[RMDB]
RNA sequence: GGGAACGACUCGAGUAGAGUCGAAAAUCGUACGAGAGUGAACGAGAUCGAGUUCACUCGAUCGUUCUCACGUUCGUGUGAGAUCUCGAGUUCUCGUUCACGAGAACACACACGUUCACGUGUUCGAUCUCUCGUUCGAGUGAACGAUCUCGAUCACGAUUGAUAUGUCCUUCGGGACAUAUCAAUCAAAAGAAACAACAACAACAAC
Reactivity to DMS in 0.01 (KOAc 150mM, MgCl2 10mM, bicine 150mM(pH8.5), 24C), signal-to-noise 3, nucleotides 027 to 156: u000c030g060u000a160c040g010a090g030a140g010u010g010a040a080c010g010a060g010a070u000c010g020a140g020u010u000c040a010c000u010c000g040a010u000c050g010u000u010c050u000c060a050c030g000u010u000c140g010u010g010u000g030a040g010a040u000c020u000c020g000a090g000u010u000c060u000c000g030u000u000c040a040c000g010a120g000a000a030c020a280c140a130c170a100c090g020u010u000c050a120c040g020u000g000u010u000c010g000a060u000c070u000c040u020c040g060u000u000c010g020a080g020u000g020a040a070c050g010a050u000c020u000c000g000a100u000c050a110c080
Reactivity to 2A3 in 0.01 (KOAc 150mM, MgCl2 10mM, bicine 150mM(pH8.5), 24C), signal-to-noise 8, nucleotides 027 to 156: u100c020g040u100a060c080g030a040g010a030g150u030g010a030a000c010g000a000g020a020u010c040g040a070g120u000u020c020a000c020u000c000g000a000u000c010g020u040u020c030u030c030a000c010g200u300u270c110g050u190g000u020g180a020g010a060u020c080u050c060g030a030g010u140u090c010u000c020g000u010u020c020a010c020g010a010g000a010a010c050a000c020a010c020a020c190g010u020u020c030a010c040g000u010g010u020u010c020g010a060u040c010u000c000u010c030g010u010u010c010g000a010g010u020g010a000a000c010g000a010u000c000u010c010g040a060u040c040a010c040
Structure probing data (DMS and 2A3) for a 207-nucleotide construct. For 2A3 the reverse transcriptase was SuperScript II with manganese. For DMS the reverse transcriptase was MarathonRT.